[RMDB]
RNA sequence: GGGAACGACUCGAGUAGAGUCGAAAAUUUUACUGUUCCUAAAGAAUUUGUGACAGGUACAGUAAAACGUAUUGCAAGGUUUAUCAGUUCCUAUAAACAGGUAAAUAACAAUAUAUGCUGCUUGGCGGAUAUUCGCGAGGUUCGCCUCGCGAAUAUCAAAAGAAACAACAACAACAAC
Reactivity to 2A3 in 0.01 (KOAc 150mM, MgCl2 10mM, bicine 150mM(pH8.5), 24C), signal-to-noise 1, nucleotides 027 to 126: u000u000u000u000a000c010u000g000u000u090c000c020u020a000a000a160g230a090a290u030u300u170g100u120g110a010c090a080g040g000u000a000c000a000g000u000a000a000a000a000c030g000u010a060u000u040g000c100a120a000g080g000u000u000u000a060u200c000a020g000u050u140c080c050u120a030u120a130a040a010c030a000g060g070u060a050a050a050u150a160a010c000a000a000u020a000u020a000u080g060c060u030g000c020u000u300g020g040c120g000